[RMDB]
RNA sequence: GGGAACGACUCGAGUAGAGUCGAAAAACUCAAAGUCCGGAUGUAUUAAUAGUAGUCAGUAGACAUCUGACAAACGAUGCCUUUUGUAAAUAUAUCAAUAAGCAUUAUGAUUUGUUCAUCUUGGAUGAAUCACAUACGUAUAAUCUGAUGAACAAUAAUUCGAAGUGCAUUUCGAUGCACUUCGAAUAAAAGAAACAACAACAACAAC
Reactivity to 2A3 in 0.01 (KOAc 150mM, MgCl2 10mM, bicine 150mM(pH8.5), 24C), signal-to-noise 1, nucleotides 027 to 156: a000c060u050c090a030a080a020g040u110c090c050g070g080a030u060g030u050a160u100u130a240a150u090a070g080u020a030g060u040c070a000g010u080a020g070a040c000a040u040c000u030g000a020c000a050a050a000c050g000a020u010g030c010c000u050u190u070u150g000u060a000a300a080u150a010u050a060u200c010a030a020u050a090a000g000c010a000u000u050a060u170g040a020u160u060u000g000u010u010c000a010u000c000u000u130g030g020a030u010g130a060a030u090c010a000c060a160u300a050c110g050u130a060u000a110a010u000c020u020g000a000u010g000a000a010c010a020a040u170a030
The record gives the reactivity of an RNA of 207 nucleotides to 2A3. The reactions ran in a buffer of 150 mM KOAc, 10 mM MgCl2 and 150 mM bicine (pH 8.5), at 24 C.